[RMDB]
RNA sequence: GGGAACGACUCGAGUAGAGUCGAAAACACGUGCCCCAGGUCCCAGAACCCAUCUUGGCUCCUAGAAACUUCUGCCCAGAGCCAGUCAGAUCAGCCUCUGAACUGGGGCCCUGGCUACUGUGGAGCCAGUGUUAAGUGCAUUCGUGCACUUAACACUAAAAGAAACAACAACAACAAC
Reactivity to DMS in 0.01 (KOAc 150mM, MgCl2 10mM, bicine 150mM(pH8.5), 24C), signal-to-noise 7, nucleotides 027 to 126: c100a100c100g010u000g010c030c020c010c020a080g000g010u000c020c000c020a120g000a090a140c040c020c030a110u010c090u010u010g020g010c000u000c010c020u000a070g000a130a100a130c130u000u010c090u010g000c080c050c010a060g000a050g000c030c020a030g000u000c030a020g000a060u010c120a140g000c130c100u010c010u000g000a070a110c070u000g010g020g010g010c020c080c010u000g000g000c020u010a090c040u010g010u000g010g000a030g010c010c050
Reactivity to 2A3 in 0.01 (KOAc 150mM, MgCl2 10mM, bicine 150mM(pH8.5), 24C), signal-to-noise 3, nucleotides 027 to 126: c060a010c020g100u090g020c010c000c000c010a020g000g040u010c000c010c010a020g030a060a030c030c020c020a090u080c050u040u050g000g020c000u010c020c010u030a050g150a110a190a100c090u190u070c070u100g060c030c010c000a010g020a010g040c010c010a010g030u030c020a000g010a090u050c040a050g080c030c030u050c020u050g030a080a050c060u040g030g020g020g000c000c000c000u000g000g020c000u100a100c020u100g120u090g020g000a010g000c000c010